RNA sequence: GGGAACGACUCGAGUAGAGUCGAAAAGGUAUGAUUACGGUGAGACCUAGGAACCGUAGGGGUAUUCUCAAAGGAAGCUUUUGCAGUGACGCCCAUGUAAGUGGGAUAUAACAACAGAACUCGUAUGUGUGGCACAGAGAGUUCGCUCUCUGUGCAAACAGAAUGUGUACUUCGGUACACAUUCUGUAAAAGAAACAACAACAACAAC
Reactivity to 2A3 in 0.01 (KOAc 150mM, MgCl2 10mM, bicine 150mM(pH8.5), 24C), signal-to-noise 2, nucleotides 027 to 156: g080g020u170a090u190g070a080u120u080a030c020g000g010u030g020a070g030a050c010c040u060a050g110g000a030a030c030c010g020u040a030g020g020g000g000u050a070u100u040c050u020c020a060a040a030g080g020a020a060g010c030u030u060u150u140g060c040a020g020u020g050a040c040g040c010c020c000a010u040g050u130a100a110g000u020g010g020g000a020u020a010u010a090a030c070a020a000c000a040g120a100a050c030u050c080g020u100a130u110g080u020g000u050g110g000c000a000c000a000g010a000g020a000g000u030u050c150g050c010u000c010u010c010u000g020u000g000c000a000a000
Reactivity to DMS in 0.01 (KOAc 150mM, MgCl2 10mM, bicine 150mM(pH8.5), 24C), signal-to-noise 2, nucleotides 027 to 156: g040g020u050a030u020g030a180u000u000a020c040g000g010u010g010a120g020a210c000c030u000a100g020g000a280a050c030c010g010u000a040g000g010g100g010u000a040u000u000c010u010c030a060a150a100g010g030a060a100g020c010u060u010u050u000g060c020a100g000u000g030a160c130g010c010c000c000a030u010g010u020a070a090g040u010g020g000g010a070u000a040u000a160a100c050a070a070c040a070g000a060a050c080u000c020g030u000a060u000g000u000g000u010g030g010c000a010c010a020g010a020g000a030g030u000u010c300g010c000u000c000u000c010u000g020u010g020c010a010a020
This 207-nucleotide RNA was probed chemically with 2A3 and DMS. The RNA was probed in 150 mM KOAc, 10 mM MgCl2 and 150 mM bicine (pH 8.5) at 24 C. For 2A3, 1,412 sequencing reads were counted. The data come from the RNA Mapping Database (RMDB), library M2RFPK.